[RMDB]
RNA sequence: GGGAACGACUCGAGUAGAGUCGAAAACGGAAGCAUUAAAACCAUUCGAGCUAGUCAAUGCGUGGCGUGUCUCUCCGCAGCGUGUUGGCGAAUGUAAAGAGUGACUAAGCAUGUAGUACCAAGGAUGAUAAGAGCAAUUCGUUCGCGAAUUGCUCAACGUGCAAUAACAGUUCGCUGUUAUUGCACGAAAAGAAACAACAACAACAAC
Reactivity to 2A3 in 0.01 (KOAc 150mM, MgCl2 10mM, bicine 150mM(pH8.5), 24C), signal-to-noise 6, nucleotides 027 to 156: c060g030g050a070a030g020c030a020u080u180a070a070a040a070c070c020a040u060u050c050g020a050g040c030u070a020g020u010c000a000a020u010g000c000g000u030g120g010c030g000u060g040u020c020u010c010u010c080c010g000c010a000g000c010g000u040g000u000u000g010g030c000g010a020a010u060g020u070a030a060a020g040a010g000u020g000a010c020u040a030a020g020c010a040u080g050u110a020g030u050a060c050c050a060a040g070g010a060u160g000a020u130a180a140g000a000g010c010a000a000u000u000c000g030u030u060c150g000c000g110a000a000u000u000g000c000u000c000a000a000
Reactivity to DMS in 0.01 (KOAc 150mM, MgCl2 10mM, bicine 150mM(pH8.5), 24C), signal-to-noise 2, nucleotides 027 to 156: c090g000g000a250a110g030c040a070u000u000a090a050a090a100c070c010a070u000u000c030g010a210g000c020u010a130g010u010c010a020a020u000g010c030g020u000g010g040c040g050u010g020u010c090u020c040u000c210c030g010c000a030g000c000g000u000g030u000u020g020g040c010g000a050a040u010g000u000a070a060a140g000a060g020u000g010a050c040u000a100a160g000c060a080u000g020u000a070g020u000a080c100c000a090a110g000g010a100u000g000a090u000a070a200g020a020g020c010a010a020u000u000c000g020u000u010c270g020c020g030a000a000u000u000g020c000u000c020a000a040